Annotation:
An RNA of 207 nucleotides, treated with 2A3 and read out base by base. It was measured as part of the RMDB library PDB130. Values cover nucleotides 27 to 156. High 2A3 reactivity points to a flexible backbone, as in loops and unpaired stretches.
RNA sequence: GGGAACGACUCGAGUAGAGUCGAAAACCAACUAGGCUUCCAAGACGCCACUUCACCCAUCAUAGAAGAACUCCUACACUUUCACGAUCACACCUUAAUAAUCGUAUUCUUAAUCAGCUCUUUAGUGUUAUAUAUCAUUUCACUCAUACUAACAACAUCAUAGUUCAGCCUUCGGGCUGAACUAUGAAAAAGAAACAACAACAACAAC
Reactivity to 2A3 in 0.01 (KOAc 150mM, MgCl2 10mM, bicine 150mM(pH8.5), 24C), signal-to-noise 2, nucleotides 027 to 156: c010c000a020a010c040u090a080g000g040c000u100u030c030c020a020a070g040a000c030g040c010c000a030c010u070u080c040a040c000c020c020a060u110c080a080u070a090g080a110a000g050a090a060c020u030c000c020u070a030c010a040c070u110u130u090c000a030c020g030a020u010c030a010c000a050c050c000u100u130a070a050u100a050a020u190c020g000u030a110u080u090c020u000u070a100a080u080c030a050g020c010u020c000u040u070u140a010g020u000g030u100u000a100u000a020u000a000u090c040a070u010u040u040c020a050c020u020c020a060u070a140c050u080a080a110c020a050a010c000a030